[RMDB]
RNA sequence: GGGAACGACUCGAGUAGAGUCGAAAAUAAGAUCUCCAGGCUCCCUGCAGCAUCCUAUCUGCUUCUCAACUGUGUAGACAUACAGAGUAAAACCCUGGUGGAGUAUGAGCAGUUGAUCGACGACAUGUCCACCAUAAAUGAAGAACAGGCCAUCAGCCGUUUGCAACGUUUUCGAACGUUGCAAACGAAAAGAAACAACAACAACAAC
Reactivity to DMS in 0.01 (KOAc 150mM, MgCl2 10mM, bicine 150mM(pH8.5), 24C), signal-to-noise 1, nucleotides 027 to 156: u000a080a150g010a220u010c010u000c010c000a090g030g000c000u000c000c020c040u030g000c060a060g010c050a140u000c000c000u000a030u020c020u000g040c000u000u000c000u000c000a100a080c010u000g100u000g080u000a190g010a100c170a210u000a080c060a160g010a120g020u000a050a130a030a300c010c000c040u000g040g000u010g030g040a130g070u010a020u000g000a110g060c020a070g040u000u000g030a180u010c100g040a160c010g000a090c050a090u000g020u000c020c010a050c020c000a150u020a020a060a120u000g000a110a120g030a110a060c000a050g000g030c050c040a080u020c000a180g000c040
Reactivity to 2A3 in 0.01 (KOAc 150mM, MgCl2 10mM, bicine 150mM(pH8.5), 24C), signal-to-noise 2, nucleotides 027 to 156: u180a030a040g020a100u010c020u020c040c010a020g050g030c000u040c020c020c000u030g000c020a030g000c000a060u000c010c070u120a100u080c020u060g030c030u120u010c030u000c010a000a110c030u030g010u010g030u170a030g050a100c040a030u140a040c000a020g030a000g020u070a000a070a060a100c000c010c020u010g030g010u000g000g030a030g080u170a030u040g040a040g110c090a010g030u060u100g130a110u150c070g070a090c040g010a040c000a030u040g030u000c020c000a000c010c020a000u130a050a070a020u200g080a010a080g020a030a020c030a010g010g030c040c000a050u070c030a030g040c000
Record summary
Conditions: 150 mM KOAc, 10 mM MgCl2 and 150 mM bicine (pH 8.5), 24 C. Chemical mapping of a 207-nucleotide RNA with DMS and 2A3. For 2A3, 1,088 sequencing reads were counted. Source: RMDB library OK3TST, as collected in RNAgym. For 2A3 the reverse transcriptase was SuperScript II with manganese.